[RMDB]
RNA sequence: GGGAACGACUCGAGUAGAGUCGAAAAUUCCAUUUGAGUAUCAUGAAAACGGGCUUUUCAGCAUGGAACGUACAUAUUAAAUAGUAGGAGUGCAUAGUGGCCCGUAUAGCAGGCAUUAACAUUCCUGAAAACGUGAAAAGGUUCGCCUUUUCACGAACGUAAGGGUAAGGUUCGCCUUACCCUUACGAAAAGAAACAACAACAACAAC
Reactivity to DMS in 0.01 (KOAc 150mM, MgCl2 10mM, bicine 150mM(pH8.5), 24C), signal-to-noise 2, nucleotides 027 to 156: u000u000c000c010a160u020u010u000g010a100g060u010a060u010c080a130u000g010a080a030a080a070c040g060g020g000c080u000u000u000u000c050a180g010c060a070u000g010g030a080a090c060g030u000a140c080a110u000a140u000u010a040a080a290u000a150g020u000a080g000g020a190g030u000g000c030a100u000a190g030u000g020g030c010c000c030g050u000a000u010a100g020c070a060g010g000c050a080u000u000a100a120c050a160u000u000c000c000u000g000a050a070a050a200c030g030u020g000a010a000a010a010g010g020u000u000c300g010c000c000u000u000u000u000c010a000c000g000a010a040
Reactivity to 2A3 in 0.01 (KOAc 150mM, MgCl2 10mM, bicine 150mM(pH8.5), 24C), signal-to-noise 3, nucleotides 027 to 156: u060u010c010c030a030u190u110u120g090a080g060u130a110u220c090a100u100g090a030a050a020a030c010g000g000g020c000u120u100u060u100c040a020g000c000a010u030g030g030a180a030c030g100u040a000c020a050u100a090u140u300a120a090a110u140a050g030u010a020g000g080a040g010u030g000c040a030u040a110g080u070g020g040c000c010c010g010u020a010u000a010g000c020a000g040g000c000a010u000u030a010a070c000a070u000u110c000c000u010g060a000a040a000a090c010g000u000g010a000a000a000a000g050g000u040u050c120g110c040c010u000u000u000u000c000a000c000g000a030a000

Source: RMDB library M2RFPK, as collected in RNAgym. The record gives the reactivity of an RNA of 207 nucleotides to DMS and 2A3. DMS adducts were read by reverse transcription with MarathonRT. Reactivities are given for positions 27 through 156. 2A3 adducts were read by reverse transcription with SuperScript II with manganese. Conditions: 150 mM KOAc, 10 mM MgCl2 and 150 mM bicine (pH 8.5), 24 C. For DMS, 3,383 sequencing reads were counted.